Background: Structure probing data (DMS and 2A3) for a 177-nucleotide construct. The DMS profile rests on 24,489 reads. Conditions: 150 mM KOAc, 10 mM MgCl2 and 150 mM bicine (pH 8.5), 24 C.

RNA sequence: GGGAACGACUCGAGUAGAGUCGAAAACUUAAUGCAUCAGAGAUCUACUGUGCUAACAUACAUAGAUUUAAGCCUGUGUAUAGAGUUAACACGGCAAUCCCUACUAUUAAGGAUUGGCUUCUCGUUCUAUAGAGCAUACAUUCGUGUAUGCUCUAUAAAAAGAAACAACAACAACAAC
Reactivity to DMS in 0.01 (KOAc 150mM, MgCl2 10mM, bicine 150mM(pH8.5), 24C), signal-to-noise 8, nucleotides 027 to 126: c020u000u000a030a010u000g010c200a080u040c170a030g010a060g000a010u000c090u010a160c040u000g010u000g000c070u000a020a030c070a080u010a010c000a010u000a000g000a040u010u030u070a110a140g010c200c010u000g010u000g010u000a010u010a110g020a260g000u000u000a010a030c000a030c010g010g000c190a070a010u010c000c000c010u000a120c240u010a070u010u010a050a030g000g000a130u000u000g000g000c090u000u000c020u000c020g010u010u020c080
Reactivity to 2A3 in 0.01 (KOAc 150mM, MgCl2 10mM, bicine 150mM(pH8.5), 24C), signal-to-noise 9, nucleotides 027 to 126: c020u030u040a070a030u120g060c050a110u090c090a060g020a000g010a050u020c040u100a040c030u040g000u000g010c010u030a040a010c000a030u030a000c000a000u030a010g060a080u140u170u180a070a020g100c020c000u010g000u000g010u010a010u030a050g260a010g050u010u010a020a010c010a000c020g020g000c010a000a010u010c010c010c000u060a120c050u040a070u200u090a070a020g020g010a020u020u040g060g040c040u050u000c010u020c020g030u140u000c010
The data come from the RNA Mapping Database (RMDB), library OK1LIB. The 2A3 profile rests on 12,016 reads.